[RMDB]
RNA sequence: GGGAACGACUCGAGUAGAGUCGAAAAGGGUAGGCUGUUUUCAGUCUACCCGAUGUGCCUGUUUUCAGGCACGGAUAUCAGCCAUCCGGAAGCCGAGGAUGGCCUAUCUGCUGAGCAUUCUGUGUGGAUUGUGAGGCAGUUAGCAGACGCGGCGACACAUCCUCCUGGCGUUCGCGCCAGGAGGAUGAAAAGAAACAACAACAACAAC
Reactivity to 2A3 in 0.01 (KOAc 150mM, MgCl2 10mM, bicine 150mM(pH8.5), 24C), signal-to-noise 1, nucleotides 027 to 156: g000g010g000u000a000g000g000c000u000g020u300u040u110u300c010a000g000u000c000u000a000c000c000c000g000a000u000g000u000g000c000c000u150g070u250u090u300u300c040a020g000g000c000a000c020g020g000a180u230a100u200c070a000g000c000c000a000u000c000c060g070g050a010a000g000c000c000g000a020g000g000a000u000g000g020c000c000u000a000u000c000u010g000c000u000g010a000g090c000a000u010u000c020u020g300u180g300u300g230g000a000u000u000g010u110g200a000g000g000c000a000g000u000u000a000g000c060a000g120a090c260g020c030g180g000c000g020a000c050a000